[RMDB]
RNA sequence: GGGAACGACUCGAGUAGAGUCGAAAAGCUUUUUCAACUAUUUACUUUGUGUUUAUAUUCUGGGUUAUUUCAUCUACUGUAUGGCUAAUAUACUUAUCCGCUAGAAUGUAUAUGUGUCGCAAUGAUAUAACACACAAAUGUUCGCAUUUGUGUGUUAAAAAGAAACAACAACAACAAC
Reactivity to DMS in 0.01 (KOAc 150mM, MgCl2 10mM, bicine 150mM(pH8.5), 24C), signal-to-noise 3, nucleotides 027 to 126: g020c090u000u000u000u000u000c040a070a060c070u010a080u000u010u010a040c020u000u020u010g020u000g010u000u000u000a070u010a110u010u000c040u000g030g000g010u010u010a070u000u000u000c040a030u000c040u000a070c090u000g020u000a080u010g030g010c040u000a120a040u000a030u000a010c010u000u000a110u000c030c100g010c170u010a080g000a040a020u000g000u000a000u000a030u000g010u010g020u000c020g010c090a050a070u000g000a060u000a090
Reactivity to 2A3 in 0.01 (KOAc 150mM, MgCl2 10mM, bicine 150mM(pH8.5), 24C), signal-to-noise 1, nucleotides 027 to 126: g010c020u130u050u020u020u070c040a050a060c000u080a050u140u140u100a050c030u020u080u160g030u030g020u020u120u010a110u050a040u050u040c050u060g020g090g000u070u020a030u070u090u020c030a100u040c020u050a120c040u050g030u170a060u120g010g000c000u080a120a000u000a080u010a010c010u010u050a050u110c010c020g000c170u000a060g060a150a020u040g000u030a010u000a010u010g030u010g010u000c000g080c090a060a040u020g030a000u040a020